[RMDB]
RNA sequence: GGGAACGACUCGAGUAGAGUCGAAAAGCUACGGAGGUUCGCCUCCGUAGCAAAGGCCCCAUCGUCUAGCGGUUAGGACGCGGCCCUCUCAAGGCCGAAACGGGGGUUCGAUUCCCCCUGGGGUCACCAAAAACAGUUGCUCCUUCGGGAGCAACUGGCAUUAUUUAAAGUUCGCUUUAAAUAAUGCAAAAGAAACAACAACAACAAC
Reactivity to 2A3 in 0.01 (KOAc 150mM, MgCl2 10mM, bicine 150mM(pH8.5), 24C), signal-to-noise 3, nucleotides 027 to 156: g000c000u000a010c000g000g010a000g000g040u090u170c220g110c030c000u000c000c000g010u000a000g000c000a000a000a000g000g000c000c000c010c000a000u000c000g010u000c000u000a020g020c090g210g210u180u120a000g000g000a010c010g000c000g010g000c000c010c000u120c020u070c110a050a040g000g010c000c000g000a000a000a000c000g000g000g000g000g000u000u000c000g000a000u000u000c000c000c000c000c000u000g000g000g010g010u010c010a010c000c000a010a080a030a010a010c010a000g000u010u000g010c010u000c000c010u060u120c190g060g010g010a000g070c000a000a010c000u010g000
Reactivity to DMS in 0.01 (KOAc 150mM, MgCl2 10mM, bicine 150mM(pH8.5), 24C), signal-to-noise 2, nucleotides 027 to 156: g010c000u010a010c020g010g010a010g030g010u000u000c300g020c010c000u000c000c000g050u010a010g030c010a000a040a090g000g030c000c000c000c000a010u020c020g000u000c030u000a040g010c040g010g020u010u000a010g030g000a010c000g010c040g000g000c010c000c030u000c220u060c220a220a100g010g020c010c000g020a010a030a020c010g000g000g030g020g000u000u000c000g000a300u000u000c020c010c000c010c030u000g000g020g050g000u000c040a030c000c040a010a100a100a080a290c020a010g020u020u000g010c000u010c000c010u000u000c300g040g000g010a010g000c000a000a010c000u000g010